[RMDB]
An RNA of 177 nucleotides, treated with DMS and 2A3 and read out base by base. Reactivities are given for positions 27 through 126. For 2A3, 4,552 sequencing reads were counted. The reactions ran in a buffer of 150 mM KOAc, 10 mM MgCl2 and 150 mM bicine (pH 8.5), at 24 C.
RNA sequence: GGGAACGACUCGAGUAGAGUCGAAAAGUUGAAUGAUUGUAUUUGAUAUGAUGUAGGGAAUGGAACAAGUCUUCCUAGCUGUCAUAAAACUUCAAAUUUCAAAAAUUGUAACAUGAAGGAAGGCGUACGAUUAGUAUGCAUUCGUGCAUACUAAUCGAAAAGAAACAACAACAACAAC
Reactivity to DMS in 0.01 (KOAc 150mM, MgCl2 10mM, bicine 150mM(pH8.5), 24C), signal-to-noise 8, nucleotides 027 to 126: g010u000u000g000a070a040u000g010a140u010u000g010u010a040u000u000u010g010a090u000a060u000g010a050u000g010u000a110g010g000g000a030a040u010g010g020a070a110c160a070a130g010u000c030u000u000c010c000u000a200g010c110u010g020u000c030a040u010a040a060a070a100c170u010u010c070a030a050a140u010u020u000c110a030a040a060a080a080u000u000g000u000a050a050c070a070u000g000a120a060g000g010a030a020g010g000c040g020u010a070
Reactivity to 2A3 in 0.01 (KOAc 150mM, MgCl2 10mM, bicine 150mM(pH8.5), 24C), signal-to-noise 5, nucleotides 027 to 126: g040u050u050g040a100a070u060g050a130u070u080g030u090a080u040u080u060g020a030u030a030u110g070a020u070g030u110a060g040g000g100a030a040u110g040g020a070a030c050a080a090g030u010c010u010u020c010c000u010a080g050c040u030g030u010c010a030u050a080a090a020a010c010u070u020c040a040a060a120u130u170u060c080a100a080a020a040a050u070u070g030u060a050a030c030a080u140g050a030a030g040g010a020a010g020g000c030g010u020a010